[RMDB]
RNA sequence: GGGAACGACUCGAGUAGAGUCGAAAAGAUAUGGAGGUAGAGCGAUAAGAUCCUGGAUCGGAAACGAUCCCUGAUCUUUUGACGCUUGUUCUCCUAAGUCAAAGGUCCUCAGUUCGCUGAGGACCAACUUCAUAACACCCUUCGGGGUGUUAUGAAGAAAAGAAACAACAACAACAAC
Reactivity to 2A3 in 0.01 (KOAc 150mM, MgCl2 10mM, bicine 150mM(pH8.5), 24C), signal-to-noise 2, nucleotides 027 to 126: g020a000u040a010u130g000g040a000g030g020u190a050g030a020g050c020g000a050u070a300a100g000a010u010c000c030u040g000g000a000u000c010g000g000a050a040a040c000g010a000u020c000c000c010u020g020a010u010c040u080u110u050u110g130a030c000g000c010u030u020g070u290u080c000u000c000c000u010a100a010g030u020c050a090a080a130g000g020u010c000c000u000c000a020g030u080u140c260g010c130u000g000a000g000g000a000c000c000a000a010
Reactivity to DMS in 0.01 (KOAc 150mM, MgCl2 10mM, bicine 150mM(pH8.5), 24C), signal-to-noise 3, nucleotides 027 to 126: g010a030u000a300u010g010g000a010g020g000u010a170g000a020g000c000g030a170u000a010a020g000a010u000c000c030u000g000g010a010u000c000g020g000a100a040a110c010g000a000u000c000c000c040u010g000a010u000c000u000u000u010u000g020a150c050g010c000u000u000g000u000u000c000u010c000c010u000a040a120g000u000c030a070a140a140g000g010u000c000c010u010c000a000g000u000u010c190g000c020u010g030a040g000g000a000c000c010a000a020